[RMDB]
RNA sequence: GGGAACGACUCGAGUAGAGUCGAAAAUGCGCGCUCAUCCUUGGUGUCGGAUUGCUGAUCGAUGCGCUCCUGAGGGCACCACGUCCACACCAGCGCGUGCCACUCGCCGUCCGGAUCGUCAUCGUCCCAACACUUUGAUCUUCGGAUCAAAGUGUUGAAAAGAAACAACAACAACAAC
Reactivity to 2A3 in 0.01 (KOAc 150mM, MgCl2 10mM, bicine 150mM(pH8.5), 24C), signal-to-noise 4, nucleotides 027 to 126: u070g000c020g010c000g000c010u050c060a140u060c070c030u040u080g030g000u040g040u050c140g020g020a090u120u210g050c100u060g090a150u160c090g050a090u070g010c100g030c050u050c030c070u150g070a190g030g030g000c000a010c000c000a010c040g010u020c010c010a040c000a020c060c010a030g020c000g000c010g010u010g030c020c010a110c000u030c040g050c010c000g040u000c000c010g000g020a060u030c000g050u050c010a060u040c030g020u010c000c010
Reactivity to DMS in 0.01 (KOAc 150mM, MgCl2 10mM, bicine 150mM(pH8.5), 24C), signal-to-noise 5, nucleotides 027 to 126: u010g020c030g020c020g010c030u010c090a090u000c060c080u000u000g000g020u000g010u000c150g030g000a060u000u020g040c150u000g010a100u010c120g000a070u000g020c030g010c060u000c020c090u000g010a100g020g010g000c000a050c050c050a090c080g010u000c010c020a040c040a030c040c050a070g000c050g010c100g000u000g000c050c050a100c070u000c040g000c020c020g000u010c030c040g020g010a070u000c030g000u000c050a040u000c060g010u000c020c040